[RMDB]
RNA sequence: GGGAACGACUCGAGUAGAGUCGAAAAUCACACCUGCACACCUUUCCUGCUGACGGUGGUUCAGAAUCAACUGCACAAAAACUGAGUUGAAAAACAGUACAUUAAGGUUAGACUGGAAUGAUAGGGGUCAGAAUGGUGGAUUCGUCCACCAUUCUGAAAAAGAAACAACAACAACAAC
Reactivity to DMS in 0.01 (KOAc 150mM, MgCl2 10mM, bicine 150mM(pH8.5), 24C), signal-to-noise 2, nucleotides 027 to 126: u000c100a140c090a160c010c000u000g000c070a130c050a030c010c020u000u000u000c040c010u000g020c060u000g020a080c180g000g020u000g020g010u000u000c050a030g040a120a160u000c030a030a050c020u000g000c030a060c180a090a050a060a110a030c200u000g010a030g010u000u000g000a060a100a030a060a070c080a000g000u000a050c110a060u010u000a100a040g020g000u000u000a110g020a090c030u000g020g050a080a040u020g000a130u000a090g010g010g020g010